[RMDB]
Structure probing data (2A3 and DMS) for a 177-nucleotide construct. The DMS profile rests on 31,991 reads. For DMS the reverse transcriptase was MarathonRT.
RNA sequence: GGGAACGACUCGAGUAGAGUCGAAAAUGGGCUCGAUCCGUCUGCCACCGCCGUUGCGUUUGUGAAGCGCAUGGCCGCGGCACAUCCGACCUUCGCGGGCAAGGUGCAGCUGCAUGUCGGCGCAGCCUACGUUAACAUCUUUCGAGAUGUUAACGUAAAAAGAAACAACAACAACAAC
Reactivity to 2A3 in 0.01 (KOAc 150mM, MgCl2 10mM, bicine 150mM(pH8.5), 24C), signal-to-noise 9, nucleotides 027 to 126: u060g010g000g000c020u020c050g060a140u050c020c010g020u030c020u030g010c010c020a050c020c030g010c000c020g070u040u070g010c030g040u020u070u130g300u150g180a120a020g000c000g000c020a030u040g040g000c000c010g020c010g010g020c010a010c010a050u040c010c050g060a130c040c020u100u100c090g000c090g010g040g000c070a070a050g030g010u030g000c060a050g010c030u040g010c020a060u170g040u080c020g010g010c030g000c050a010g010c000c010
Reactivity to DMS in 0.01 (KOAc 150mM, MgCl2 10mM, bicine 150mM(pH8.5), 24C), signal-to-noise 9, nucleotides 027 to 126: u010g000g010g010c020u000c050g000a080u000c030c040g010u010c050u000g000c020c060a080c090c220g010c010c010g010u000u000g010c020g020u000u000u000g030u010g010a090a060g010c000g020c020a050u000g010g020c030c140g010c030g000g010c030a070c070a040u010c050c020g000a180c040c060u000u000c180g010c150g000g000g010c090a090a070g000g010u000g010c050a100g010c050u000g010c050a070u000g010u000c030g000g000c080g010c100a040g000c020c050